[RMDB]
RNA sequence: GGGAACGACUCGAGUAGAGUCGAAAACGUUGUUUCCGAUGAUGGUGCAAUACAGGUGAUCGGACAGGCGGUGUUUUAUCCGCCCGAAAGUUCACCGAUAUUUCUUCAAUAGAGGAAGCAAAAGUCGUAACAAGGUAGCUGUAGGUGAACCUGCAGCGGAUAUGGUACGGUUCGCCGUACCAUAUCCAAAAGAAACAACAACAACAAC
Reactivity to DMS in 0.01 (KOAc 150mM, MgCl2 10mM, bicine 150mM(pH8.5), 24C), signal-to-noise 2, nucleotides 027 to 156: c080g000u000u010g000u000u000u000c000c010g020a140u000g010a170u000g030g010u010g030c050a050a050u000a060c090a210g020g020u030g010a010u000c000g030g000a300c040a020g000g010c000g030g000u000g000u000u010u000u010a110u040c000c010g000c010c000c000g040a030a170a300g020u000u000c000a000c010c000g010a120u000a040u000u000u000c020u000u010c020a090a140u000a120g000a180g040g000a030a030g000c030a040a030a040a130g020u020c140g000u000a050a090c050a050a080g020g010u000a070g010c030u010g070u000a050g030g000u010g020a090a120c060c050u010g000c000a040g010c050
Reactivity to 2A3 in 0.01 (KOAc 150mM, MgCl2 10mM, bicine 150mM(pH8.5), 24C), signal-to-noise 4, nucleotides 027 to 156: c030g020u010u010g000u010u020u000c010c020g000a060u070g000a010u050g040g060u040g010c050a050a040u040a080c050a070g000g000u000g000a000u010c010g020g030a010c020a010g000g000c010g000g030u020g060u010u220u040u280a040u000c000c000g000c000c000c000g040a030a000a010g000u000u000c000a000c010c010g000a000u000a040u020u030u000c000u070u060c010a080a070u050a130g060a040g070g040a040a010g010c000a000a050a060a030g130u100c070g050u080a070a050c040a080a020g080g020u050a020g020c000u010g000u010a000g020g060u150g170a140a230c000c000u010g020c010a000g000c000
Notes:
Chemical mapping of a 207-nucleotide RNA with DMS and 2A3. For 2A3, 2,601 sequencing reads were counted. The DMS profile rests on 2,805 reads. The data come from the RNA Mapping Database (RMDB), library PDB130.